An RNA of 177 nucleotides, treated with DMS and 2A3 and read out base by base.

RNA sequence: GGGAACGACUCGAGUAGAGUCGAAAAGUAAUGUGACUCAUAUCAGAGAAUUGGCAGAGAGAAUGAUGAGGCUUAAAGGGGUAGAGCAUGUAAAGCUUACAAGUACUGCAAAUGGUGAGUCUCUAGAGAGUACGUAGUAUUUCGAUACUACGUACUCAAAAGAAACAACAACAACAAC
Reactivity to DMS in 0.01 (KOAc 150mM, MgCl2 10mM, bicine 150mM(pH8.5), 24C), signal-to-noise 6, nucleotides 027 to 126: g020u010a070a050u010g020u010g000a050c030u010c030a040u020a120u010c090a090g000a100g020a120a070u030u020g010g000c020a040g000a120g010a100g010a060a070u030g000a090u020g010a070g010g010c020u000u020a040a080a110g000g000g000g020u010a070g010a060g030c040a040u000g010u020a060a060a080g010c040u010u000a050c080a050a050g020u020a060c030u010g000c050a030a040a050u000g010g010u000g000a040g010u010c020u000c000u000a020g010a300
Reactivity to 2A3 in 0.01 (KOAc 150mM, MgCl2 10mM, bicine 150mM(pH8.5), 24C), signal-to-noise 9, nucleotides 027 to 126: g110u130a050a110u160g080u080g050a020c000u000c020a030u070a110u200c050a040g050a020g060a190a170u140u110g060g000c060a010g040a010g020a010g040a140a020u060g070a060u100g030a040g040g000c010u050u060a080a080a040g070g020g020g020u080a060g030a020g080c030a030u090g040u210a070a070a020g000c010u020u050a040c020a090a060g030u030a060c020u010g010c000a030a030a080u060g030g000u030g020a020g000u000c000u000c000u030a040g050a000

It was measured as part of the RMDB library OK1LIB. The reactions ran in a buffer of 150 mM KOAc, 10 mM MgCl2 and 150 mM bicine (pH 8.5), at 24 C.